[RMDB]
RNA sequence: GGGAACGACUCGAGUAGAGUCGAAAACCGCUUCUACCCCUUAAUAGAAACUAACAAACUAGUUCAAACUAUAACACUAUGCCUAGGAGCUAUCACCACCUUAUUUACAGCACUAUGUGCAAUCACACAAAAUGAUAUCAAAAAAAUCGUAGCCUUCGUGUAGUGAACUCUUCGGAGUUCACUACACAAAAGAAACAACAACAACAAC
Reactivity to 2A3 in 0.01 (KOAc 150mM, MgCl2 10mM, bicine 150mM(pH8.5), 24C), signal-to-noise 1, nucleotides 027 to 156: c000c050g030c100u050u000c000u020a030c000c020c000c000u000u060a000a010u050a270g030a010a020a020c000u060a080a000c010a140a130a000c030u000a000g020u010u050c020a000a140a030c010u090a060u130a300a010c070a010c120u090a090u070g040c040c000u010a020g000g000a010g000c000u090a030u050c010a010c000c010a060c000c000u060u090a080u070u230u080a130c060a030g040c030a000c030u080a110u170g040u000g000c000a020a020u050c010a010c010a000c080a100a020a010a020u060g050a010u050a070u170c120a030a030a030a030a030a000a030u020c030g030u030a050g050c000c000u010u030c010